RNA sequence: GGGAACGACUCGAGUAGAGUCGAAAAUUUUUAUUUUUGUAGAGAUGGGAUCUCAUUAUGUUGCCCAGGCUGGUCUUGAACUUCUGAGCUCAAGUGAUCCUCCAGCCUUGGCCUCCCAAAGUGCUGGAUUUAGCAUUGGAUUCGUCCAAUGCUAAAUAAAAGAAACAACAACAACAAC
Reactivity to DMS in 0.01 (KOAc 150mM, MgCl2 10mM, bicine 150mM(pH8.5), 24C), signal-to-noise 5, nucleotides 027 to 126: u000u010u000u010u020a040u010u000u010u000u000g000u000a100g000a050g000a030u000g010g000g040a300u000c020u010c030a060u010u000a070u010g010u000u000g000c090c010c050a030g010g020c050u000g000g000u000c020u000u000g000a090a030c020u000u010c180u000g010a060g020c070u010c040a020a040g020u010g010a100u000c090c080u010c010c000a020g010c010c000u000u000g000g010c040c070u000c010c000c010a090a070a090g010u010g020c040u000g000g000
Reactivity to 2A3 in 0.01 (KOAc 150mM, MgCl2 10mM, bicine 150mM(pH8.5), 24C), signal-to-noise 1, nucleotides 027 to 126: u000u010u040u090u020a120u010u030u010u160u110g070u030a040g020a040g020a070u050g060g100g000a030u050c020u000c040a010u130u120a100u140g070u140u080g010c000c000c010a020g000g000c010u040g000g060u030c000u020u010g030a010a000c030u130u120c140u300g190a010g000c010u000c030a000a040g040u020g110a160u070c000c010u030c000c000a000g000c030c000u020u010g000g010c000c000u000c000c000c000a040a030a000g110u090g080c040u060g050g030